Chemical mapping of a 207-nucleotide RNA with DMS and 2A3. Reactivities are given for positions 27 through 156. For 2A3, 1,833 sequencing reads were counted.

RNA sequence: GGGAACGACUCGAGUAGAGUCGAAAAAGCUUGCCUCGGCGAUGAACAUCGUCAAUGAGGAAGGUAGCUGGGAUAAAUGGGGUAAGAACCUCGCCUCACAGAUGGUCUCGAAACAAUCUGUGAGUCUCGCCCAGCGUCAGCUCGACUUGAAGCACAAUCUAGUGAGAGAGUUCGCUCUCUCACUAGAAAAAGAAACAACAACAACAAC
Reactivity to DMS in 0.01 (KOAc 150mM, MgCl2 10mM, bicine 150mM(pH8.5), 24C), signal-to-noise 2, nucleotides 027 to 156: a150g020c000u000u010g000c010c010u000c010g000g020c300g020a030u000g040a110a160c180a070u000c010g080u000c060a080a300u000g000a010g020g010a030a020g010g030u000a060g000c040u010g010g000g060a160u000a040a020a080u010g020g000g030g000u000a140a140g000a130a300c020c000u000c010g050c300c000u010c000a040c010a000g000a000u000g020g020u000c050u010c240g000a160a060a050c010a040a010u000c010u010g000u000g000a040g000u000c000u000c090g010c000c000c000a050g000c060g000u020c010a060g020c010u000c010g020a110c090u010u010g010a120a120g000c030a050c090a090a270
Reactivity to 2A3 in 0.01 (KOAc 150mM, MgCl2 10mM, bicine 150mM(pH8.5), 24C), signal-to-noise 3, nucleotides 027 to 156: a000g060c030u050u050g150c000c000u000c010g000g010c000g000a000u010g150a090a100c100a200u060c040g060u030c130a090a150u120g010a010g010g010a010a000g040g010u040a010g000c000u000g000g010g010a070u100a110a150a060u180g030g020g010g000u050a130a090g110a170a110c000c000u000c000g060c000c000u010c000a000c000a000g010a000u020g030g020u070c060u110c290g150a160a120a000c030a010a090u000c000u000g000u000g020a000g000u000c010u000c040g000c000c000c000a000g000c000g020u030c010a010g000c010u020c020g070a190c110u080u100g120a120a020g000c040a030c020a070a070

Description
Source: RMDB library OK3TST, as collected in RNAgym. The reactions ran in a buffer of 150 mM KOAc, 10 mM MgCl2 and 150 mM bicine (pH 8.5), at 24 C. In probing experiments dimethyl sulfate is read out at A N1 and C N3, which are open when not base-paired. Reactivities are rounded to 0.1 and cut off at 0 and 3.